Chemical mapping of a 207-nucleotide RNA with DMS and 2A3. It was measured as part of the RMDB library M2RFPK. For 2A3, 1,650 sequencing reads were counted. For DMS the reverse transcriptase was MarathonRT. 2A3 adducts were read by reverse transcription with SuperScript II with manganese.
[RMDB]
RNA sequence: GGGAACGACUCGAGUAGAGUCGAAAAAUACAUACUGAGACCGGUUGCUCAACAGGCUGUGUGGGACAAUAGAAUAACAAGGCUGUCAAUUUGAGCUUGACGGCUGCAAACCGAAUGGAGUGAAAUCGUAACCGGACUCACUUCGGUGAGUCCGGAAGGAUAAACAAUUGUUCGCAAUUGUUUAUCCAAAAGAAACAACAACAACAAC
Reactivity to DMS in 0.01 (KOAc 150mM, MgCl2 10mM, bicine 150mM(pH8.5), 24C), signal-to-noise 2, nucleotides 027 to 156: a180u010a100c040a090u010a100c040u000g000a080g000a070c060c010g020g000u010u000g000c000u000c000a090a070c090a100g000g020c000u000g030u000g030u010g050g000g000a120c090a060a110u000a090g010a190a120u000a110a050c070a080a200g000g010c010u000g000u000c010a050a030u010u030u000g010a160g040c300u010u010g030a020c040g020g040c010u000g000c050a030a090a060c020c010g010a070a140u000g080g000a120g010u000g040a080a030a090u010c030g020u000a130a190c010c000g000g000a040c010u010c000a010c010u010u010c230g050g010u000g000a040g020u010c000c000g010g010a000a010
Reactivity to 2A3 in 0.01 (KOAc 150mM, MgCl2 10mM, bicine 150mM(pH8.5), 24C), signal-to-noise 2, nucleotides 027 to 156: a010u120a020c030a020u150a070c030u060g020a020g030a080c000c040g080g000u040u040g010c050u050c080a070a020c020a120g020g000c040u010g010u020g000u070g070g010g010a000c010a010a110u060a120g080a090a060u090a130a020c060a080a030g050g000c010u000g000u010c000a000a010u050u090u280g050a020g030c000u010u010g000a000c000g010g020c020u030g000c050a000a000a110c050c020g070a050a030u090g080g000a020g030u100g060a060a060a060u100c070g020u050a080a060c000c000g010g000a000c000u000c000a000c010u010u060c050g050g000u000g000a000g000u010c010c000g000g010a010a000